RNA sequence: GGGAACGACUCGAGUAGAGUCGAAAAGUGACUGGGCUUGUCUGCACCAUGUCGGUGUGAGUGCAGGAGCCGAGCAAUAACGACAGCAUCGACUGCGCCCGGAGAAUGUCUGGACGGUCUUUCAAGGACGCGGGUUCAAUUCCCGCCAUCUCCACUAGUGCUAUAAAUGGUUCGCCAUUUAUAGCACAAAAGAAACAACAACAACAAC
Reactivity to 2A3 in 0.01 (KOAc 150mM, MgCl2 10mM, bicine 150mM(pH8.5), 24C), signal-to-noise 5, nucleotides 027 to 156: g100u060g050a140c050u120g010g000g000c000u060u040g050u120c000u000g000c000a000c000c010a020u050g080u120c120g020g050u170g000u000g020a140g030u000g000c010a000g020g000a000g000c000c000g000a020g020c040a010a210u160a130a020c020g090a040c020a030g050c010a110u080c050g060a060c010u040g020c060g040c010c000c030g040g000a020g020a100a130u080g030u090c040u070g050g080a070c050g040g000u020c060u030u210u150c090a110a070g060g000a010c030g000c000g000g010g000u020u050c010a010a000u060u040c000c000c000g010c000c000a030u010c020u010c020c000a050c060u090a040
Reactivity to DMS in 0.01 (KOAc 150mM, MgCl2 10mM, bicine 150mM(pH8.5), 24C), signal-to-noise 2, nucleotides 027 to 156: g000u010g000a100c020u000g020g010g020c000u010u000g020u010c000u010g020c000a010c000c010a020u010g020u000c120g040g020u000g000u000g000a220g010u000g010c010a020g030g010a080g000c000c010g020a100g030c010a060a100u010a120a080c060g030a100c030a030g000c010a300u000c050g000a060c000u000g010c040g060c000c000c030g060g040a080g010a100a090u000g010u000c030u000g000g030a080c010g000g020u000c010u010u000u000c030a130a230g040g020a030c040g020c010g000g030g080u000u000c220a070a300u010u000c000c000c010g040c020c030a000u000c020u000c030c030a080c110u000a190
The record gives the reactivity of an RNA of 207 nucleotides to 2A3 and DMS. Values cover nucleotides 27 to 156. Conditions: 150 mM KOAc, 10 mM MgCl2 and 150 mM bicine (pH 8.5), 24 C. DMS adducts were read by reverse transcription with MarathonRT. The 2A3 profile rests on 4,113 reads. The data come from the RNA Mapping Database (RMDB), library RSTRND.